[RMDB]
RNA sequence: GGGAACGACUCGAGUAGAGUCGAAAAUUCAUGGAGACCCAUCCCACACUGGAUGCCCUACACUGUGACAUCGGCAAUGCCACUGAGUUUUACAAAAUAUUCCAAGAUGAGAUUAGGGAGGUGUCGCAAAUGCUACGCGUUUCGACGCGUAGCAUUUAAAAGAAACAACAACAACAAC
Reactivity to DMS in 0.01 (KOAc 150mM, MgCl2 10mM, bicine 150mM(pH8.5), 24C), signal-to-noise 2, nucleotides 027 to 126: u050u000c040a090u000g040g000a160g010a130c100c020c000a050u120c000c020c040a080c130a070c060u020g030g010a060u000g010c050c030c040u000a120c180a070c060u010g070u000g000a120c040a050u100c030g050g020c030a050a040u030g000c020c000a020c060u000g010a070g000u000u020u000u010a090c150a040a040a050a020u000a130u000u020c110c000a040a050g000a020u040g000a080g010a070u040u020a040g000g000g020a120g000g040u000g010u020c010g090c080
Reactivity to 2A3 in 0.01 (KOAc 150mM, MgCl2 10mM, bicine 150mM(pH8.5), 24C), signal-to-noise 3, nucleotides 027 to 126: u000u030c000a010u050g020g000a120g010a050c000c000c000a020u040c000c000c000a010c040a040c050u000g010g000a000u020g020c000c000c000u040a030c090a010c060u050g040u070g050a020c000a050u030c050g010g010c030a080a100u090g040c000c000a090c090u060g000a040g020u100u140u000u070a060c030a030a070a010a010u230a090u100u000c000c000a040a000g170a180u160g060a030g010a090u050u210a070g000g000g000a050g090g000u000g010u000c000g000c020